[RMDB]
Structure probing data (DMS) for a 177-nucleotide construct. The RNA was probed in 150 mM KOAc, 10 mM MgCl2 and 150 mM bicine (pH 8.5) at 24 C. The DMS profile rests on 1,089 reads. For DMS the reverse transcriptase was MarathonRT.
RNA sequence: GGGAACGACUCGAGUAGAGUCGAAAAGGCCGAACGGUCCGUCGACGUGGACGGUCUCACCGCCGUCGAGUUCGGCGAGCCAGGGCGACAGCUCGCCGUCGGGGUCGACGCCGACUGUGAGCUCGAAUACUCCGACCUCAUUCGUGAGGUCGGAGUAAAAAGAAACAACAACAACAAC
Reactivity to DMS in 0.01 (KOAc 150mM, MgCl2 10mM, bicine 150mM(pH8.5), 24C), signal-to-noise 2, nucleotides 027 to 126: g000g020c010c000g030a110a210c130g020g010u010c030c010g030u000c000g000a040c000g020u010g020g000a050c000g000g020u010c040u010c300a160c170c190g010c030c000g000u000c000g000a260g000u030u000c020g000g010c000g000a040g020c010c040a200g030g000g040c050g010a150c220a070g020c030u000c030g060c000c020g020u000c020g000g010g020g000u000c130g000a100c170g020c020c000g000a030c000u000g010u010g020a060g010c000u000c050g000a110a110